Notes
This 177-nucleotide RNA was probed chemically with 2A3 and DMS. The DMS profile rests on 1,129 reads.
[RMDB]
RNA sequence: GGGAACGACUCGAGUAGAGUCGAAAAGAUAUGGAUCAAUACGAAUGAACUACGAAGUAGAUCGGAAACGAUCUACAUUCGCACUAUAUUGAUCCUAAGUCAAAAGGGGACCGUUCGCGGUCCCCAACAUUCUGUAGUGCUUCGGCACUACAGAAUGAAAAGAAACAACAACAACAAC
Reactivity to 2A3 in 0.01 (KOAc 150mM, MgCl2 10mM, bicine 150mM(pH8.5), 24C), signal-to-noise 1, nucleotides 027 to 126: g020a000u000a010u050g000g010a000u010c000a000a000u050a040c120g240a130a240u240g070a250a250c230u190a080c300g000a000a000g000u020a000g000a010u000c000g020g020a000a000a000c000g000a000u000c000u010a000c000a040u000u000c000g000c000a050c040u010a000u020a010u040u020g000a000u010c000c000u000a010a000g000u000c030a030a000a090a250g000g010g000g030a000c080c050g000u030u020c300g040c010g150g000u000c010c040c020c000a000a000
Reactivity to DMS in 0.01 (KOAc 150mM, MgCl2 10mM, bicine 150mM(pH8.5), 24C), signal-to-noise 1, nucleotides 027 to 126: g030a030u000a060u000g000g010a000u000c000a000a020u000a020c140g010a190a050u000g010a150a170c170u030a090c020g010a010a040g000u010a000g010a030u000c000g000g010a030a010a030c010g020a010u000c000u000a020c010a060u000u010c000g010c110a090c080u020a060u000a000u000u000g010a000u000c010c000u010a030a110g000u010c010a040a070a130a180g010g010g000g040a000c000c020g050u000u010c200g020c020g000g000u000c000c000c000c000a000a020

The RNA was probed in 150 mM KOAc, 10 mM MgCl2 and 150 mM bicine (pH 8.5) at 24 C.